Chemical mapping of a 207-nucleotide RNA with DMS and 2A3. For 2A3 the reverse transcriptase was SuperScript II with manganese. Source: RMDB library OK3TST, as collected in RNAgym. For DMS, 2,996 sequencing reads were counted.

RNA sequence: GGGAACGACUCGAGUAGAGUCGAAAAGAAGUAUUCAUGUCGUUUUGGAUGGUAGAGUUAUUUGUAUUUAAGUCAAUAAACUAAUCGUUUGAUGUUCUCUUGCCGAAGGUUCGGUAACGAUGUGCAUGGUGAAUUUUUUUAGGGUAAUGUAUUCCCCCCUAUAACCGCUUUUCGAAGCGGUUAUAGGAAAAGAAACAACAACAACAAC
Reactivity to DMS in 0.01 (KOAc 150mM, MgCl2 10mM, bicine 150mM(pH8.5), 24C), signal-to-noise 2, nucleotides 027 to 156: g000a090a120g000u000a080u010u000c050a050u020g050u000c020g000u000u000u000u000g020g010a070u000g030g000u010a080g020a100g040u010u000a080u010u030u000g000u000a080u000u000u000a050a190g030u000c060a060a090u000a110a030a060c060u000a050a070u000c070g020u000u010u000g000a100u010g010u000u000c050u010c020u010u000g040c030c030g010a040a190g030g010u000u020c020g030g010u000a040a050c060g000a020u000g030u010g050c010a050u000g000g010u010g000a070a030u030u000u000u030u000u050u040a130g000g000g010u000a070a070u010g010u000a270u000u000c010c010c030c150
Reactivity to 2A3 in 0.01 (KOAc 150mM, MgCl2 10mM, bicine 150mM(pH8.5), 24C), signal-to-noise 2, nucleotides 027 to 156: g050a090a000g040u090a080u090u070c050a030u100g050u030c040g020u000u040u100u150g070g010a020u060g000g080u060a030g030a040g160u030u220a250u130u130u080g040u050a130u070u060u050a000a020g000u050c040a070a070u100a060a120a020c020u080a000a170u090c010g050u050u100u080g070a010u000g040u090u040c040u010c000u100u020g010c000c010g040a080a070g290g040u130u020c090g000g000u010a060a000c020g020a030u080g100u070g000c010a020u030g000g000u070g080a100a090u080u030u030u030u030u070u140a010g010g000g000u120a020a090u090g030u090a030u110u180c050c030c000c030